[RMDB]
RNA sequence: GGGAACGACUCGAGUAGAGUCGAAAAGAAUCACCGUACCUAUUUAGGUUUACGCUCCAAGAUCGGUGGAUAGCAGCCCUAUCAAUAUCUAGGAAAACUGUGCUAUGUUUAGAAGAUUAGGUAGUCUAUUACACAGCCAUGUUCGCAUGGCUGUGAACGGUAGUUUACCUUUCGAGGUAAACUACCGAAAAGAAACAACAACAACAAC
Reactivity to DMS in 0.01 (KOAc 150mM, MgCl2 10mM, bicine 150mM(pH8.5), 24C), signal-to-noise 1, nucleotides 027 to 156: g000a100a120u000c000a160c020c000g010u000a060c030c030u000a170u010u000u010a040g020g020u000u000u000a050c080g010c020u000c010c020a030a130g000a060u000c060g000g020u000g010g020a130u000a050g020c040a120g010c100c030c000u000a110u000c050a090a110u000a070u010c140u010a050g030g000a080a050a050a070c030u000g000u000g000c000u000a060u000g010u000u000u000a110g020a080a080g030a070u000u000a120g000g000u000a090g000u000c040u020a110u000u000a130c020a020c020a000g020c030c010a000u000g000u000u000c270g000c010a030u000g000g020c000u000g000u000g030a000a060
Reactivity to 2A3 in 0.01 (KOAc 150mM, MgCl2 10mM, bicine 150mM(pH8.5), 24C), signal-to-noise 3, nucleotides 027 to 156: g050a050a060u110c020a000c010c010g050u100a030c010c000u060a150u160u190u270a070g000g010u000u050u070a070c070g010c050u030c050c030a040a030g000a100u040c030g000g010u010g000g030a030u110a020g020c060a030g010c020c020c000u050a060u080c020a090a090u070a050u160c030u090a030g060g000a060a040a000a090c040u060g000u000g160c070u080a040u120g050u040u070u020a110g010a170a020g000a050u100u070a030g010g080u020a050g050u000c010u030a100u060u030a090c010a000c000a000g000c000c000a000u000g010u000u030c050g000c140a000u000g000g000c000u000g000u000g000a000a010
The record gives the reactivity of an RNA of 207 nucleotides to DMS and 2A3. The reactions ran in a buffer of 150 mM KOAc, 10 mM MgCl2 and 150 mM bicine (pH 8.5), at 24 C. The 2A3 profile rests on 1,569 reads. For DMS the reverse transcriptase was MarathonRT. High 2A3 reactivity points to a flexible backbone, as in loops and unpaired stretches. 2A3 adducts were read by reverse transcription with SuperScript II with manganese.